[RMDB]
RNA sequence: GGGAACGACUCGAGUAGAGUCGAAAAUGCAAACUAUCGUGGACACGGACCAGAUCCACCAAGACUUCGUCCGAAGUAUACUGCGGAUUCUCAUGAUCCAUGUAAUGUUGCUAUAGCACCGAAUUUAAUCCCUCAUCCGUUUCGACGGAUGAGGGAUAAAAGAAACAACAACAACAAC
Reactivity to DMS in 0.01 (KOAc 150mM, MgCl2 10mM, bicine 150mM(pH8.5), 24C), signal-to-noise 2, nucleotides 027 to 126: u010g000c030a020a040a020c020u000a130u000c070g040u000g000g000a040c070a040c100g000g010a090c240c190a170g020a040u000c000c000a000c090c270a120a090g010a070c000u000u000c010g000u000c220c160g000a050a000g000u000a030u020a170c090u000g010c050g010g000a000u000u000c040u010c030a100u000g020a140u000c000c000a000u000g000u000a040a110u000g000u000u000g000c030u000a070u000a210g010c170a300c030c000g020a030a060u010u010u020a170
Reactivity to 2A3 in 0.01 (KOAc 150mM, MgCl2 10mM, bicine 150mM(pH8.5), 24C), signal-to-noise 1, nucleotides 027 to 126: u110g050c010a060a000a060c010u020a020u090c020g030u030g000g000a030c010a020c040g060g000a030c080c000a050g070a080u000c000c000a010c060c030a090a080g030a040c000u030u010c020g190u100c130c130g020a000a000g000u030a020u030a050c040u050g040c040g020g050a000u110u060c030u000c000a040u090g030a180u030c000c020a020u010g010u050a070a170u120g000u040u010g010c020u040a010u060a170g080c050a060c070c010g050a030a040u080u040u040a130
Source: RMDB library OK2TRN, as collected in RNAgym. An RNA of 177 nucleotides, treated with DMS and 2A3 and read out base by base. The reactions ran in a buffer of 150 mM KOAc, 10 mM MgCl2 and 150 mM bicine (pH 8.5), at 24 C. For 2A3, 885 sequencing reads were counted. DMS adducts were read by reverse transcription with MarathonRT. In probing experiments dimethyl sulfate is read out at A N1 and C N3, which are open when not base-paired. For 2A3 the reverse transcriptase was SuperScript II with manganese. For DMS, 964 sequencing reads were counted.